Overview:
An RNA of 177 nucleotides, treated with DMS and read out base by base. Source: RMDB library TTRINS, as collected in RNAgym. The RNA was probed in 150 mM KOAc, 10 mM MgCl2 and 150 mM bicine (pH 8.5) at 24 C.
[RMDB]
RNA sequence: GGGAACGACUCGAGUAGAGUCGAAAAGAUAUGGAAUUCGUGGAUAAGGACAACAGCAACGAGCUAUUAGGCUCGGAAACGAGCCUAAUAGCUCGUUGACAUGUCCGUAACACGAGAUUCCUAAGUCCUUACAGUCAAUCUUCGGAUUGACUGUAAGAAAAGAAACAACAACAACAAC
Reactivity to DMS in 0.01 (KOAc 150mM, MgCl2 10mM, bicine 150mM(pH8.5), 24C), signal-to-noise 1, nucleotides 027 to 126: g010a130u030a270u010g010g000a060a030u000u000c010g020u000g020g020a110u000a150a290g000g010a010c000a010a190c280a150g010c010a020a010c030g000a000g000c000u000a010u000u000a010g010g000c080u010c030g020g000a010a100a130c020g000a000g040c010c000u000a010a000u000a000g030c000u000c000g020u010u000g000a010c070a220u010g000u000c000c020g000u000a070a230c030a000c000g010a050g000a010u000u000c010c000u020a090a110g000u000c070